[RMDB]
The record gives the reactivity of an RNA of 177 nucleotides to DMS and 2A3.
The reactions ran in a buffer of 150 mM KOAc, 10 mM MgCl2 and 150 mM bicine (pH 8.5), at 24 C.
Values cover nucleotides 27 to 126.
Source: RMDB library OK2TRN, as collected in RNAgym.
For 2A3 the reverse transcriptase was SuperScript II with manganese.
For 2A3, 1,093 sequencing reads were counted.
DMS adducts were read by reverse transcription with MarathonRT.

RNA sequence: GGGAACGACUCGAGUAGAGUCGAAAAGAAAGGGACCCCUGCCAAGGGAGCGUCGGUCAGCACCCUACGCAUAUUUUUUUAUGCCGCUGACACCCCUCGACGCCGCAGGAGGGGUGGUCCCGAAAGAAUAUCGUGCUAGUUUCGACUAGCACGAUAUAAAAGAAACAACAACAACAAC
Reactivity to DMS in 0.01 (KOAc 150mM, MgCl2 10mM, bicine 150mM(pH8.5), 24C), signal-to-noise 2, nucleotides 027 to 126: g000a100a110a170g000g000g010a050c000c000c000c020u000g020c010c030a140a140g010g000g000a130g010c000g030u000c020g000g020u000c020a030g000c000a160c170c140c140u010a080c200g000c000a000u000a000u000u000u010u000u000u010u000a010u010g010c030c240g000c020u010g000a010c020a170c060c020c060c050u010c010g000a080c040g020c010c000g050c080a150g000g000a070g010g010g010g020u010g030g000u010c060c000c010g010a040a060a080g000a130
Reactivity to 2A3 in 0.01 (KOAc 150mM, MgCl2 10mM, bicine 150mM(pH8.5), 24C), signal-to-noise 1, nucleotides 027 to 126: g030a070a050a010g000g020g010a010c000c030c000c000u040g080c040c030a040a020g120g040g050a210g010c010g010u000c060g090g020u020c000a000g000c010a090c000c020c150u130a120c050g050c010a010u060a080u150u170u000u000u000u090u000a000u010g030c030c040g000c010u010g000a020c000a140c010c040c010c040u000c000g030a010c000g040c000c020g060c080a060g000g040a000g000g020g070g050u080g020g000u030c020c000c000g010a000a000a000g110a020